Conditions: 150 mM KOAc, 10 mM MgCl2 and 150 mM bicine (pH 8.5), 24 C.
An RNA of 207 nucleotides, treated with 2A3 and DMS and read out base by base.
For 2A3, 2,049 sequencing reads were counted.
DMS adducts were read by reverse transcription with MarathonRT.
RNA sequence: GGGAACGACUCGAGUAGAGUCGAAAAUGGAUGGUGCAGGUAUGCGGGCCUGCUGGAAAACAGGUUCUCAUACCCUAACCGUGGAAACCGGUCGAGGCCCGGAAGGGAGCAGACUCACUGUGGGCAACCGUCGCUUGCGGGGUCGCGGGGUGGAGAAGAUGUAUUAUAAGUUCGCUUAUAAUACAUCAAAAGAAACAACAACAACAAC
Reactivity to 2A3 in 0.01 (KOAc 150mM, MgCl2 10mM, bicine 150mM(pH8.5), 24C), signal-to-noise 2, nucleotides 027 to 156: u150g030g000a020u050g020g000u030g000c040a030g010g010u000a010u000g010c010g000g010g030c010c020u020g010c030u040g090g120a040a080a020a010c020a010g020g000u020u020c000u010c000a010u030a020c000c000c000u010a020a020c000c010g000u010g010g010a060a080a010c030c020g010g010u060c070g050a100g020g060c020c010c020g020g090a070a040g020g010g000a030g020c050a020g020a060c000u030c010a060c020u050g000u110g020g030g000c030a060a040c050c030g110u090c030g040c080u040u070g020c010g020g010g020g020u020c010g020c030g010g000g000g030u090g020g040a070g010a090a040
Reactivity to DMS in 0.01 (KOAc 150mM, MgCl2 10mM, bicine 150mM(pH8.5), 24C), signal-to-noise 2, nucleotides 027 to 156: u000g010g000a060u000g000g010u000g000c200a060g030g030u000a020u020g040c070g000g010g000c000c000u000g020c000u000g000g010a110a150a110a050c010a010g030g000u000u000c020u000c000a040u000a020c010c020c040u010a150a070c020c020g050u000g030g000a100a120a130c030c010g030g010u080c010g020a160g030g010c220c010c010g000g020a120a140g000g020g000a100g020c040a130g010a080c020u010c010a150c060u000g010u000g000g030g000c030a080a090c060c030g000u000c050g030c100u000u000g010c060g030g030g070g010u000c060g010c040g030g000g020g010u000g000g010a140g000a120a180